This 177-nucleotide RNA was probed chemically with 2A3 and DMS. Reactivities are given for positions 27 through 126. For DMS the reverse transcriptase was MarathonRT.
RNA sequence: GGGAACGACUCGAGUAGAGUCGAAAAGGAAGUGGGUGAAUUCUUCGGAGGUGAACGCUUUGUUGCCUUCGCCAGCCAGAACGUAUUUACCGUCUUUGUAGAAUUCAGAUGCUGCGCAGUCCAUCGCUAUUAUCCCGACGUUCGCGUCGGGAUAAUAAAAAGAAACAACAACAACAAC
Reactivity to 2A3 in 0.01 (KOAc 150mM, MgCl2 10mM, bicine 150mM(pH8.5), 24C), signal-to-noise 5, nucleotides 027 to 126: g150g030a050a060g040u120g030g030g090u020g040a030a040u060u010c010u020u080c110g040g010a030g060g000u070g070a040a000c010g020c040u140u080u150g170u170u110g010c000c000u030u080c020g000c010c000a050g010c020c010a030g020a030a000c060g010u050a150u040u090u080a040c030c020g100u010c030u040u070u060g040u050a050g020a110a050u060u020c020a030g080a150u100g010c030u010g010c030g000c020a030g020u000c000c000a040u060c030g010c090
Reactivity to DMS in 0.01 (KOAc 150mM, MgCl2 10mM, bicine 150mM(pH8.5), 24C), signal-to-noise 3, nucleotides 027 to 126: g000g010a070a050g040u020g000g030g000u000g000a020a050u010u000c040u020u010c040g000g000a170g030g020u000g010a010a030c150g030c090u010u010u010g030u010u010g000c040c080u010u000c070g020c050c070a120g000c020c010a090g010a010a030c090g020u000a060u010u010u010a070c020c020g010u020c040u010u030u020g020u000a070g010a060a040u000u020c030a050g030a070u030g000c010u000g010c000g000c030a060g010u010c010c020a040u020c090g000c120